The record gives the reactivity of an RNA of 177 nucleotides to DMS and 2A3. Values are in units of 0.01, from 0 to 300, in steps of 10. The DMS profile rests on 2,188 reads.

[RMDB]
RNA sequence: GGGAACGACUCGAGUAGAGUCGAAAAGACGCCUGUGUGGCGAAGCGAGCAAUGGCAUAAGCCGCAAUAGAAGAUGAGAUGGAAGCGGCAAGAUAGAAUGCUCGCAAGGAGAUCCAUCUCACAGAGAAUAUCCACCCACUUUCGAGUGGGUGGAUAUAAAAGAAACAACAACAACAAC
Reactivity to DMS in 0.01 (KOAc 150mM, MgCl2 10mM, bicine 150mM(pH8.5), 24C), signal-to-noise 2, nucleotides 027 to 126: g010a100c030g020c030c000u000g020u040g030u060g010g000c000g000a180a180g000c000g010a010g000c020a090a110u060g030g000c160a060u000a130a140g010c000c010g020c010a250a030u030a080g000a060a090g000a170u000g000a010g000a030u000g000g000a080a220g010c000g000g030c020a040a070g010a070u030a040g010a120a010u000g000c000u000c030g000c020a020a120g030g030a150g010a140u000c000c000a000u000c000u000c000a050c080a120g000a150g000a160
Reactivity to 2A3 in 0.01 (KOAc 150mM, MgCl2 10mM, bicine 150mM(pH8.5), 24C), signal-to-noise 1, nucleotides 027 to 126: g070a010c000g050c030c010u260g070u030g130u210g110g020c010g010a020a000g000c000g000a000g020c010a020a050u080g190g000c020a020u060a070a010g000c000c010g000c000a000a000u180a220g180a210a000g080a220u030g000a000g000a000u000g000g000a030a160g000c000g000g000c000a020a030g080a030u110a020g150a190a040u030g000c000u030c020g000c000a000a000g110g000a030g000a000u000c000c000a000u000c000u040c010a020c010a000g100a000g030a080

The RNA was probed in 150 mM KOAc, 10 mM MgCl2 and 150 mM bicine (pH 8.5) at 24 C. The data come from the RNA Mapping Database (RMDB), library OK1LIB.